[RMDB]
RNA sequence: GGGAACGACUCGAGUAGAGUCGAAAAGCUUGCUCUUACGUUGUGCACGGCGGACGUAGGGGGACUUUUGUCUGUGCUAAGACUCUGGCGCGUGCGGUGCAGGCCUAGCAGAGUCCGACAAACGCAGUACGCACCGCUAAACCUGUAGGCGCGCAGCGAGUAUGGCUAAGUUCGCUUAGCCAUACUCAAAAGAAACAACAACAACAAC
Reactivity to 2A3 in 0.01 (KOAc 150mM, MgCl2 10mM, bicine 150mM(pH8.5), 24C), signal-to-noise 6, nucleotides 027 to 156: g060c050u180u240g010c000u000c010u030u020a000c010g010u020u030g060u100g090c040a030c040g040g000c030g020g010a000c000g000u020a030g010g000g000g000g020a030c030u140u130u110u150g080u090c020u010g020u010g020c020u030a030a010g010a010c010u010c040u080g040g020c020g000c000g050u060g000c000g010g020u040g000c050a090g020g160c020c050u040a040g010c010a000g010a020g020u040c020c020g020a020c070a020a130a040c110g030c060a010g040u110a020c070g010c000a010c000c000g010c010u050a110a090a070c020c010u060g090u180a070g020g080c000g000c000g000c010a010g030c020
Reactivity to DMS in 0.01 (KOAc 150mM, MgCl2 10mM, bicine 150mM(pH8.5), 24C), signal-to-noise 2, nucleotides 027 to 156: g020c000u020u010g010c020u000c010u010u000a040c020g030u000u000g010u000g020c060a080c040g010g000c030g000g000a040c020g020u000a040g010g000g020g020g010a090c040u000u010u010u000g020u000c010u000g030u000g030c040u000a130a070g010a050c030u010c000u000g000g020c030g040c020g020u000g000c030g000g010u000g010c000a150g020g010c040c010u020a080g000c020a090g000a080g010u000c010c010g000a170c070a060a050a130c060g020c090a140g010u010a090c050g010c000a040c000c000g010c040u000a060a050a080c040c030u000g020u000a130g030g010c020g000c030g050c000a130g010c110